[RMDB]
RNA sequence: GGGAACGACUCGAGUAGAGUCGAAAAACUGGGAUCCAGGAAACUUGAUUACAAAUAAAUAUGCUGUUUUAAUGAAUUUGUGUAAUAGAAGCUAGAUUCCAGUGUCAGCUACUUUCAUGACAUCAUCGUCUAUUUCAAGUUUCGACUUGAAAUAGACAAAAGAAACAACAACAACAAC
Reactivity to 2A3 in 0.01 (KOAc 150mM, MgCl2 10mM, bicine 150mM(pH8.5), 24C), signal-to-noise 9, nucleotides 027 to 126: a000c000u000g000g010g010a000u000c010c020a020g020g040a070a100a060c020u020u050g030a020u050u040a010c010a010a100a060u150a080a100a040u230a100u190g100c070u090g220u170u150u130u190a130a150u150g090a030a060u030u040u060g060u000g000u020a030a000u020a080g100a080a000g030c000u010a010g000a000u010u000c000c010a000g000u000g010u020c010a010g020c010u070a050c030u140u130u130c080a090u080g050a040c000a050u120c010a060u110c110
Reactivity to DMS in 0.01 (KOAc 150mM, MgCl2 10mM, bicine 150mM(pH8.5), 24C), signal-to-noise 6, nucleotides 027 to 126: a040c020u000g000g010g000a010u010c010c060a300g000g000a100a050a210c030u010u000g010a140u010u020a010c010a030a040a070u020a060a090a080u010a050u030g020c120u010g010u010u030u020u040a040a090u030g000a100a050u020u010u000g000u020g000u000a020a070u000a060g010a060a050g000c010u000a040g000a000u010u000c000c010a020g010u010g000u010c050a060g000c050u010a050c120u010u010u010c060a070u000g010a050c070a060u040c150a070u020c160
This 177-nucleotide RNA was probed chemically with 2A3 and DMS. The RNA was probed in 150 mM KOAc, 10 mM MgCl2 and 150 mM bicine (pH 8.5) at 24 C. As a SHAPE reagent, 2A3 marks flexible, mostly unpaired nucleotides at the ribose 2'-OH.